Conditions: 150 mM KOAc, 10 mM MgCl2 and 150 mM bicine (pH 8.5), 24 C. The record gives the reactivity of an RNA of 177 nucleotides to 2A3 and DMS. The DMS profile rests on 4,852 reads. 2A3 adducts were read by reverse transcription with SuperScript II with manganese.
[RMDB]
RNA sequence: GGGAACGACUCGAGUAGAGUCGAAAACUGACAGAUGCAGACCUGCGCAAGCUGGACGCCAGUGUCAAGCGCAACACUGCCCUAAUCAAGCGGUUGCGCAGUGUGAGCGAGGAGUCCAAAGCUGGCCGCUCUCUAGCUAAUUCGUUAGCUAGAGAGCAAAAGAAACAACAACAACAAC
Reactivity to 2A3 in 0.01 (KOAc 150mM, MgCl2 10mM, bicine 150mM(pH8.5), 24C), signal-to-noise 4, nucleotides 027 to 126: c020u030g130a050c030a080g170a100u150g050c000a010g040a110c000c030u060g010c070g000c050a050a010g020c010u030g020g010a010c020g010c020c000a030g020u040g090u160c040a030a040g010c010g000c010a000a010c070a020c050u160g000c000c000c010u100a070a050u090c040a070a030g030c030g080g000u010u020g000c010g000c010a000g010u050g000u030g030a040g020c020g050a150g030g010a020g000u000c010c000a050a090a010g010c020u030g010g000c020c040
Reactivity to DMS in 0.01 (KOAc 150mM, MgCl2 10mM, bicine 150mM(pH8.5), 24C), signal-to-noise 5, nucleotides 027 to 126: c040u000g020a100c080a080g010a070u010g010c040a050g010a140c050c050u000g000c080g010c030a060a070g030c020u000g000g010a040c050g000c030c010a120g010u000g010u000c080a110a110g000c010g000c030a100a010c010a030c030u010g030c000c020c010u000a090a070u020c300a210a130g010c070g000g000u000u000g020c130g010c000a030g010u010g010u000g000a300g010c020g010a100g000g010a070g000u000c020c020a030a030a070g010c010u010g010g010c050c150